[RMDB]
RNA sequence: GGGAACGACUCGAGUAGAGUCGAAAAGGAGAUCGAAGACGACCGACGUCAGCACGGUCCGGAUGUAGGUCCGCAUGCAUCCCAGUUGACGAAACUUCACGAUUUCCAAAGCGGACAAGAAGUCAAACACUCAGGAUCCAUUCGUGGAUCCUGAGUGAAAAGAAACAACAACAACAAC
Reactivity to 2A3 in 0.01 (KOAc 150mM, MgCl2 10mM, bicine 150mM(pH8.5), 24C), signal-to-noise 3, nucleotides 027 to 126: g040g000a000g000a000u030c010g000a080a040g080a100c190g060a050c040c050g090a060c020g100u100c080a020g000c100a020c110g100g010u040c050c000g000g000a010u000g010u010a000g020g020u000c010c010g030c000a000u000g000c010a000u000c010c000c020a020g020u020u020g010a010c030g070a080a100a070c050u050u020c030a030c130g030a010u020u000u000c000c000a070a050a000g000c000g000g000a000c000a000a060g170a070a020g100u140c070a040a010a000
Reactivity to DMS in 0.01 (KOAc 150mM, MgCl2 10mM, bicine 150mM(pH8.5), 24C), signal-to-noise 2, nucleotides 027 to 126: g010g000a020g000a090u000c000g060a200a210g010a060c110g000a060c050c030g090a050c020g000u000c080a020g000c100a180c080g000g020u010c020c140g000g020a000u010g020u020a030g000g000u000c000c060g000c000a080u000g000c000a010u000c000c000c300a100g000u010u000g000a250c000g000a040a080a090c040u000u010c030a090c300g000a120u000u000u000c000c000a150a050a000g000c000g000g030a020c030a150a060g000a220a170g010u010c010a060a080a080